[RMDB]
RNA sequence: GGGAACGACUCGAGUAGAGUCGAAAAGGCCACCGCCGAGGCCCCGCUGUGGUAGCUCACCAUGGCCGCGACAUCGGCGGCCCACAAUUGUUCGUAGGCUGCCUCGGUCGCCGCGAUCGCCGGGGCGGCGGCCUAGACUGUUCGCAGUCUAGGCCGCAAAAGAAACAACAACAACAAC
Reactivity to DMS in 0.01 (KOAc 150mM, MgCl2 10mM, bicine 150mM(pH8.5), 24C), signal-to-noise 2, nucleotides 027 to 126: g020g000c060c130a170c010c010g020c010c010g010a070g010g010c020c030c040c300g000c010u020g020u000g010g000u000a140g030c220u000c170a080c010c020a010u000g010g030c020c060g010c130g010a030c030a050u000c040g010g030c000g030g030c010c010c000a070c120a100a110u000u010g010u000u000c120g000u000a110g000g010c010u000g020c000c010u010c030g000g020u010c060g010c060c070g000c080g000a090u000c070g010c030c020g000g030g010g000c030g020